Background: Structure probing data (2A3) for a 207-nucleotide construct. Source: RMDB library M2RFPK, as collected in RNAgym.
RNA sequence: GGGAACGACUCGAGUAGAGUCGAAAAAGACGGAAACCCAGCGACUGUCACCAGAUGCUGCAUCACCUGAUCACUGAUGGCUCAACGGUAUCCGGCGGUACAACUGAAUACUUGUAGCUGCCUUUUGAAAAGGAGUUCAUCUUCGGAUGAACUCCAAGCGUAUCCAAUCGUUCGCGAUUGGAUACGCAAAAGAAACAACAACAACAAC
Reactivity to 2A3 in 0.01 (KOAc 150mM, MgCl2 10mM, bicine 150mM(pH8.5), 24C), signal-to-noise 1, nucleotides 027 to 156: a010g010a000c040g100g000a120a090a020c010c030c080a050g060c010g110a100c010u000g010u090c010a030c070c010a090g010a110u100g040c030u080g020c000a090u070c000a050c000c090u130g010a090u030c040a030c060u040g000a010u030g030g060c010u000c050a070a000c020g000g000u060a040u020c010c090g040g040c040g010g010u040a020c030a070a030c040u180g120a050a080u090a110c010u060u050g020u030a000g050c020u030g020c030c030u100u050u070u130g080a170a160a020a060g010g000a000g010u010u000c000a000u010c000u090u120c230g140g000a000u000g000a000a000c000u000c000c000a000a010

Values cover nucleotides 27 to 156.